RNA sequence: GGGAACGACUCGAGUAGAGUCGAAAAUCUAGAUUCGUCUAGAGUUAAAGAUAUGGAUGAACUACCCACCAAGUACUCCCCACCUUUAGUAUCGGAAACGAUACUAAAGAGGUACUUGAGGUUCAUCCUAAGUCAGUGUCGACUUUUCGAAGUCGAACAAUUACGUUUCUUUCGAGAAACGUAAUUGAAAAGAAACAACAACAACAAC
Reactivity to DMS in 0.01 (KOAc 150mM, MgCl2 10mM, bicine 150mM(pH8.5), 24C), signal-to-noise 6, nucleotides 027 to 156: u000c010u010a020g000a060u000u000c300g020u000c020u010a020g010a080g000u000u010a080a110a150g010a120u000a210u010g020g000a030u000g030a010a010c010u000a040c030c000c010a300c140c000a020a040g010u000a020c020u010c270c060c040c050a300c220c000u010u000u000a010g010u000a000u000c000g020g010a170a120a250c010g010a010u000a000c000u000a000a000a000g000a140g020g000u000a010c020u000u000g000a100g030g020u000u010c000a020u000c000c000u000a010a070g020u010c040a180g000u000g010u000c010g010a020c010u010u000u000u010c190g010a040a030g010u000c010g000a030a180
Reactivity to 2A3 in 0.01 (KOAc 150mM, MgCl2 10mM, bicine 150mM(pH8.5), 24C), signal-to-noise 7, nucleotides 027 to 156: u010c000u000a000g010a030u050u060c220g020u020c150u010a010g010a020g050u130u280a170a140a050g060a080u150a060u190g000g000a000u010g010a000a000c000u130a240c040c020c030a010c010c000a010a000g000u000a000c010u090c050c030c000c000a040c010c000u010u000u000a000g000u000a000u000c000g000g000a030a020a030c010g000a000u000a000c000u000a000a000a000g000a000g000g010u000a000c000u000u000g010a000g020g000u000u000c000a000u000c000c000u010a060a020g060u060c120a030g070u030g090u170c000g000a010c000u020u040u070u140c220g140a040a010g000u010c010g010a010a010
An RNA of 207 nucleotides, treated with DMS and 2A3 and read out base by base. Values cover nucleotides 27 to 156. For 2A3, 10,136 sequencing reads were counted. DMS (dimethyl sulfate) methylates the pairing face of unpaired adenines and cytosines. Source: RMDB library RNAMAK, as collected in RNAgym.